RNA sequence: GGGAACGACUCGAGUAGAGUCGAAAACAAUCGCGCCUGUACGUUUCGCGAGCUGACGGUUGAUCGUGGCCUCAACCGACGGGGUUCCGACAUAUCCAACGCAUCUCACAUCUGAUUCGAUCAGUUAAUAGUACGCUACCUUCGGGUAGCGUACUAUAAAAGAAACAACAACAACAAC
Reactivity to 2A3 in 0.01 (KOAc 150mM, MgCl2 10mM, bicine 150mM(pH8.5), 24C), signal-to-noise 1, nucleotides 027 to 126: c080a000a100u080c030g000c030g020c000c030u090g000u030a020c070g010u060u000u150c060g020c010g000a010g030c050u030g010a030c020g040g010u070u000g020a100u040c040g020u090g060g010c000c000u030c030a030a100c010c050g090a080c120g070g000g010g000u020u100c040c010g000a020c010a070u140a010u000c040c020a000a000c070g020c040a080u040c040u050c040a020c000a140u020c010u030g020a070u110u100c080g080a140u000c020a020g030u000u020a010
Reactivity to DMS in 0.01 (KOAc 150mM, MgCl2 10mM, bicine 150mM(pH8.5), 24C), signal-to-noise 1, nucleotides 027 to 126: c190a090a180u010c050g020c090g000c040c030u000g010u000a090c120g020u020u000u010c050g010c090g000a050g030c020u000g000a130c180g020g000u030u010g000a070u000c030g000u000g000g000c020c090u000c010a050a090c090c070g000a070c110g000g010g020g000u000u010c060c030g000a130c070a010u000a030u000c050c020a050a090c130g000c010a040u030c050u000c020a100c200a110u000c000u000g000a140u000u020c190g010a110u000c020a070g000u000u010a150